[RMDB]
RNA sequence: GGGAACGACUCGAGUAGAGUCGAAAAUCGAAAUCAUCGGGAGUGAUCCAGAUCACGGUCCUGCCAUGAGACCGCAACGAGAGCAUGUCGCAUCGAAUGGACUCGGGGAGUCGGCAGCUUGCCCCACUAAGGCAGACGUUGUUCGCAACGUCUGCAAUCGAAUAUCGCUCUUCGGAGCGAUAUUCGAAAAAGAAACAACAACAACAAC
Reactivity to 2A3 in 0.01 (KOAc 150mM, MgCl2 10mM, bicine 150mM(pH8.5), 24C), signal-to-noise 1, nucleotides 027 to 156: u000c010g010a060a000a000u070c000a010u110c120g000g000g020a030g000u090g020a020u020c010c080a020g020a130u220c060a010c210g010g010u030c000c000u010g090c020c020a020u060g000a050g000a040c000c060g000c030a120a010c050g080a010g000a010g160c070a020u080g110u170c070g000c040a040u050c040g010a050a070u080g020g020a030c030u000c040g010g000g000g000a050g000u010c030g040g000c000a030g070c020u060u180g020c000c000c000c060a040c040u090a010a140g160g000c000a000g000a000c020g000u000u010g060u060u050c150g000c060a000a000c000g000u000c020u030g000c000a000a000

The data come from the RNA Mapping Database (RMDB), library M2RFPK. The record gives the reactivity of an RNA of 207 nucleotides to 2A3. The reactions ran in a buffer of 150 mM KOAc, 10 mM MgCl2 and 150 mM bicine (pH 8.5), at 24 C. Reactivities are rounded to 0.1 and cut off at 0 and 3. For 2A3, 627 sequencing reads were counted. Reactivities are given for positions 27 through 156.